[RMDB]
RNA sequence: GGGAACGACUCGAGUAGAGUCGAAAAGGAAACAGACCAGGCUUUGUGCAGCUCCAGGCUGGGGUGCUGACAUCACUGGACCCCUCCUUGUGGGGGGACGCUGUCUGUCACGUGAGCUGGGGCCAUCAGUUUGAGCGUGGCUGCUCCACAGGGCCCAUAGGAUUAUGGCCUUCGGGCCAUAAUCCUAAAAAGAAACAACAACAACAAC
Reactivity to 2A3 in 0.01 (KOAc 150mM, MgCl2 10mM, bicine 150mM(pH8.5), 24C), signal-to-noise 1, nucleotides 027 to 156: g080g000a090a020a000c010a000g180a110c000c000a000g000g180c050u190u070u190g040u020g070c090a020g000c000u000c000c050a070g130g000c040u020g000g120g000g060u000g010c000u020g000a000c000a000u070c060a110c170u210g250g000a300c000c000c010c000u000c030c020u180u160g030u300g000g000g000g000g000g000a010c030g060c010u000g000u000c020u030g210u260c000a010c080g300u250g010a000g030c000u000g000g000g000g110c010c010a110u170c060a140g080u170u200u270g060a000g000c160g000u000g000g010c020u000g000c000u000c000c000a000c040a050g090g040g000c030c040c000a020